[RMDB]
RNA sequence: GGGAACGACUCGAGUAGAGUCGAAAAAAAGACGCGGUUGCCGAUCGGUAUGGAUGCCACCGUGACGGCUCAAGCACACAAGUGCCAACGAUAACGAGGCGCUCGCUAUUGCUGCGUAACUGACGGCUAGAUACAGCCAGGUUCGCCUGGCUGUAAAACAUAACAUCUCCUUCGGGAGAUGUUAUGUAAAAGAAACAACAACAACAAC
Reactivity to DMS in 0.01 (KOAc 150mM, MgCl2 10mM, bicine 150mM(pH8.5), 24C), signal-to-noise 2, nucleotides 027 to 156: a050a020a070g000a050c040g010c020g020g010u000u010g000c010c020g000a110u000c010g020g020u010a110u000g010g000a110u000g020c040c050a090c020c000g030u000g010a220c110g020g010c010u000c040a090a090g020c040a060c040a090c110a080a030g070u000g010c010c010a060a080c050g010a120u000a060a080c020g000a230g020g020c030g020c040u000c020g020c010u000a040u010u000g020c010u010g020c040g010u000a060a070c050u000g010a060c040g010g000c020u010a090g010a280u010a010c000a000g000c020c000a010g000g020u000u010c300g030c030c010u010g000g000c010u020g010u000a000a010a080
Reactivity to 2A3 in 0.01 (KOAc 150mM, MgCl2 10mM, bicine 150mM(pH8.5), 24C), signal-to-noise 3, nucleotides 027 to 156: a000a000a020g090a000c030g000c040g010g010u060u070g020c010c010g020a080u010c010g010g010u100a080u120g110g020a090u170g060c030c020a020c000c030g030u030g100a080c020g010g030c010u030c060a050a010g010c020a020c000a010c060a140a060g010u000g010c000c020a110a090c050g080a100u120a160a070c060g010a050g080g000c060g020c020u040c030g040c040u040a070u140u240g020c040u000g000c020g050u030a070a050c020u010g070a050c030g020g030c030u030a010g020a090u030a020c000a000g000c000c000a000g010g040u030u030c120g040c010c000u000g000g000c000u010g000u000a000a000a000

Description: Structure probing data (DMS and 2A3) for a 207-nucleotide construct. The DMS profile rests on 3,974 reads. For DMS the reverse transcriptase was MarathonRT. It was measured as part of the RMDB library M2RFPK.